RNA sequence: GGGAACGACUCGAGUAGAGUCGAAAAGGGUGGCUAGGAACGCGGGGGACCAGUGGAGCCAUGGGAUGCCCUUCCCGAUGUCCGAUCAUCUCCCUCCCCCCCGAGUGUCGCCCAGGAAUGGCGGGACGUUCUAUCUAAUGUUCGCAUUAGAUAGAACAAAAGAAACAACAACAACAAC
Reactivity to 2A3 in 0.01 (KOAc 150mM, MgCl2 10mM, bicine 150mM(pH8.5), 24C), signal-to-noise 3, nucleotides 027 to 126: g020g010g010u040g010g000c050u060a060g110g160a230a050c040g020c050g040g000g000g010g020a020c040c100a040g020u110g130g040a010g010c050c030a060u080g040g000g010a010u080g030c010c000c000u030u040c010c010c000g020a060u090g040u040c030c010g020a070u110c010a040u040c030u020c000c000c000u010c010c000c000c020c000c000c010g040a060g020u050g020u020c010g010c010c000c000a010g040g070a110a060u090g040g000c040g000g010g000a010c060
Reactivity to DMS in 0.01 (KOAc 150mM, MgCl2 10mM, bicine 150mM(pH8.5), 24C), signal-to-noise 5, nucleotides 027 to 126: g010g010g030u000g010g000c040u010a120g010g020a090a090c080g030c140g010g000g000g010g000a110c120c080a100g030u000g010g010a050g000c160c100a070u000g010g000g000a070u010g000c030c010c040u000u000c020c010c010g010a070u000g000u000c040c040g010a080u000c070a070u000c040u000c000c020c010u000c040c010c000c000c000c010c010g000a100g000u000g000u000c010g000c040c010c040a060g000g010a070a080u010g000g010c050g000g010g010a090c200
Structure probing data (2A3 and DMS) for a 177-nucleotide construct. For 2A3 the reverse transcriptase was SuperScript II with manganese. DMS adducts were read by reverse transcription with MarathonRT. For DMS, 8,170 sequencing reads were counted.